An RNA of 177 nucleotides, treated with DMS and 2A3 and read out base by base. The RNA was probed in 150 mM KOAc, 10 mM MgCl2 and 150 mM bicine (pH 8.5) at 24 C. Source: RMDB library TTRDEL, as collected in RNAgym. For DMS, 22,948 sequencing reads were counted.
[RMDB]
RNA sequence: GGGAACGACUCGAGUAGAGUCGAAAAGAUAUGGAAAUCGCGAUAAGAUGCACUCGGAAACGAGUGGCAUCUUUUGACGCGGAUUCCUAAGUCAAAAGGUAAGGUAUGGUUCGCCAUACCUUACCAACUUCUUAUGUAUGUUCGCAUACAUAAGAAGAAAAGAAACAACAACAACAAC
Reactivity to DMS in 0.01 (KOAc 150mM, MgCl2 10mM, bicine 150mM(pH8.5), 24C), signal-to-noise 9, nucleotides 027 to 126: g010a040u000a300u010g000g000a010a010a050u000c000g020c000g010a160u010a030a020g010a010u000g010c000a030c010u000c000g010g000a100a070a150c000g010a010g010u000g010g010c000a000u000c000u000u000u000u000g010a170c050g010c010g010g010a050u000u000c000c000u000a040a110g000u010c030a070a070a120a100g010g000u000a010a010g000g010u000a000u000g000g000u000u010c250g020c000c000a010u000a000c000c000u000u000a000c000c000a020a030
Reactivity to 2A3 in 0.01 (KOAc 150mM, MgCl2 10mM, bicine 150mM(pH8.5), 24C), signal-to-noise 5, nucleotides 027 to 126: g010a010u050a010u100g000g010a000a030a040u020c000g000c000g020a040u040a250a050g000a000u010g010c000a000c010u000c010g010g020a060a050a030c010g010a000g010u020g010g060c000a000u000c000u010u010u010u020g010a010c000g000c000g010g000a000u010u000c000c000u020a080a020g050u040c050a040a030a070a170g000g000u010a000a000g000g010u010a010u020g010g040u020u210c270g040c040c000a000u000a000c000c000u000u000a000c000c000a000a000